Background: Chemical mapping of a 177-nucleotide RNA with 2A3 and DMS. Conditions: 150 mM KOAc, 10 mM MgCl2 and 150 mM bicine (pH 8.5), 24 C. Values cover nucleotides 27 to 126. Values are in units of 0.01, from 0 to 300, in steps of 10.

[RMDB]
RNA sequence: GGGAACGACUCGAGUAGAGUCGAAAAGAAGAAGAAGACGAGCUCCCUUCGAUCCAAUCCAGGAGAGGAAGUGGUAGGAUGCAGCUGCCGGUUCAUGGAUACCUCUGCAGUGCAUGUCGUAGGCUUGACAAUCCUUUUAGUUCGCUAAAAGGAUUGUAAAAGAAACAACAACAACAAC
Reactivity to 2A3 in 0.01 (KOAc 150mM, MgCl2 10mM, bicine 150mM(pH8.5), 24C), signal-to-noise 3, nucleotides 027 to 126: g070a040a000g020a050a000g030a030a010g060a000c020g010a010g040c000u030c000c000c000u020u010c020g020a020u000c020c010a050a040u060c040c050a030g020g030a050g010a020g140g040a040a030g040u090g150g000u080a040g000g050a010u030g010c000a080g060c010u000g010c010c020g000g020u070u090c050a120u170g140g020a090u130a110c000c020u060c060u150g000c010a010g010u010g000c010a020u040g040u060c020g020u050a020g100g000c020u010u010g000
Reactivity to DMS in 0.01 (KOAc 150mM, MgCl2 10mM, bicine 150mM(pH8.5), 24C), signal-to-noise 7, nucleotides 027 to 126: g010a100a080g000a070a060g000a070a060g000a070c050g010a090g010c030u000c020c010c000u000u000c030g010a150u010c010c030a100a120u010c170c120a110g010g010a050g010a190g010g010a020a030g000u010g010g010u000a060g020g010a040u000g010c020a050g010c020u000g020c010c300g010g000u010u000c100a140u010g010g010a090u010a030c040c010u000c110u020g010c020a030g020u000g010c030a020u000g010u010c030g000u000a050g010g000c030u000u000g000